[RMDB]
RNA sequence: GGGAACGACUCGAGUAGAGUCGAAAACGCAGGCAAUGAUCGGAUCCCCGCCGCCGGGUCAACAGCAGCCGCAGUUGAUCACACAGCCGACGGUCAUUUCCGCCGGAAAUGGUGGCAACAAUGGCAAAACACAGAAGUUAUUCGUAACUUCUGUGUUAAAAGAAACAACAACAACAAC
Reactivity to 2A3 in 0.01 (KOAc 150mM, MgCl2 10mM, bicine 150mM(pH8.5), 24C), signal-to-noise 3, nucleotides 027 to 126: c030g020c030a030g050g000c040a070a190u120g030a070u150c030g020g030a090u090c040c010c020c020g050c020c010g000c000c020g070g000g000u030c020a060a050c000a090g090c010a030g080c030c090g020c020a010g010u010u020g020a150u050c010a000c000a000c000a060g070c000c000g020a020c000g000g030u040c060a080u120u170u070c020c020g000c020c000g030g030a020a010a050u100g010g000u000g000g000c000a020a010c040a040a040u060g020g000c000a060a050
Reactivity to DMS in 0.01 (KOAc 150mM, MgCl2 10mM, bicine 150mM(pH8.5), 24C), signal-to-noise 7, nucleotides 027 to 126: c120g010c110a070g010g010c060a080a060u000g000a060u010c060g010g010a160u010c030c020c020c110g020c050c050g020c040c030g010g000g000u000c040a040a040c090a090g020c130a130g000c060c050g000c120a180g010u000u000g000a060u000c000a050c040a100c060a040g000c000c000g020a020c010g010g010u020c300a140u000u010u000c010c000g000c010c000g010g010a010a020a070u000g000g000u000g000g000c050a040a010c070a040a090u010g000g010c040a110a070